[RMDB]
RNA sequence: GGGAACGACUCGAGUAGAGUCGAAAAGAAAGAUCGAAAAACUAGGAAUAAAGAUCGAAACUAGGAAAGAAAGAAAGACAGGAAUAAAGUGUGGAAAUAAAACUGUCGAAACACACGAAAAAGAAAAGGGUAUACAUUACUUCGGUAAUGUAUACCCAAAAGAAACAACAACAACAAC
Reactivity to DMS in 0.01 (KOAc 150mM, MgCl2 10mM, bicine 150mM(pH8.5), 24C), signal-to-noise 3, nucleotides 027 to 126: g000a080a140a160g020a010u000c040g020a090a040a100a150a110c070u030a060g000g010a030a120u010a090a120a100g010a070u010c020g010a180a070a060c040u010a040g000g000a040a030a120g010a050a040a120g000a070a060a120g000a010c050a020g000g010a020a020u020a040a140a090g020u050g020u000g000g040a090a130a020u000a060a050a070a140c020u000g010u010c020g030a070a060a040c080a030c190a020c060g010a110a010a030a040a060g030a060a120a100a070
Reactivity to 2A3 in 0.01 (KOAc 150mM, MgCl2 10mM, bicine 150mM(pH8.5), 24C), signal-to-noise 3, nucleotides 027 to 126: g100a020a090a000g100a070u180c120g070a010a000a000a090a210c060u180a010g090g100a040a100u170a250a170a020g120a030u100c040g070a060a000a010c070u130a060g140g000a080a150a000g030a030a140a000g090a020a090a000g000a000c040a020g000g190a100a180u180a120a280a040g050u070g010u090g080g140a090a060a000u160a080a030a000a000c030u020g060u060c010g010a000a030a000c040a000c020a000c000g080a000a060a100a060a090g080a020a260a000a020
An RNA of 177 nucleotides, treated with DMS and 2A3 and read out base by base. Conditions: 150 mM KOAc, 10 mM MgCl2 and 150 mM bicine (pH 8.5), 24 C. The DMS profile rests on 2,918 reads. It was measured as part of the RMDB library OK1LIB. Reactivities are rounded to 0.1 and cut off at 0 and 3. Values cover nucleotides 27 to 126.